[RMDB]
RNA sequence: GGGAACGACUCGAGUAGAGUCGAAAAUGUUUUAGUCCUUGUAAAAUUGAUUCAUAUUGGAUUUGGUCAUUGUAAUAUGUAGAAUAUUUGAUUUUAGUCCCUCAAAAUGAGGACUAAAAUGAAUAUUGAAUUACCUAUACUUCGGUAUAGGUAAUUCAAAAGAAACAACAACAACAAC
Reactivity to DMS in 0.01 (KOAc 150mM, MgCl2 10mM, bicine 150mM(pH8.5), 24C), signal-to-noise 1, nucleotides 027 to 126: u000g000u000u010u000u000a050g000u000c000c010u000u000g010u000a070a060a100a110u010u010g000a120u000u010c060a060u000a090u000u000g030g000a070u000u010u010g000g010u000c040a070u000u020g010u020a040a050u000a040u010g010u010a100g020a080a050u000a000u000u000u000g000a050u000u000u000u000a010g010u000c070c000c070u000c080a060a050a060a150u010g000a030g020g000a050c010u000a010a000a030a000u000g000a020a040u020a050u000u000
Reactivity to 2A3 in 0.01 (KOAc 150mM, MgCl2 10mM, bicine 150mM(pH8.5), 24C), signal-to-noise 1, nucleotides 027 to 126: u080g010u000u050u000u030a020g020u020c030c000u010u070g120u070a060a100a130a160u060u060g030a000u040u040c080a010u000a070u090u040g050g010a000u070u030u140g030g000u020c010a000u000u050g030u060a030a060u030a070u160g050u030a140g030a110a030u040a070u100u040u060g000a000u050u000u080u020a010g000u070c110c000c020u000c010a000a120a000a060u180g000a000g040g000a000c000u000a000a000a020a000u020g010a070a070u110a050u070u000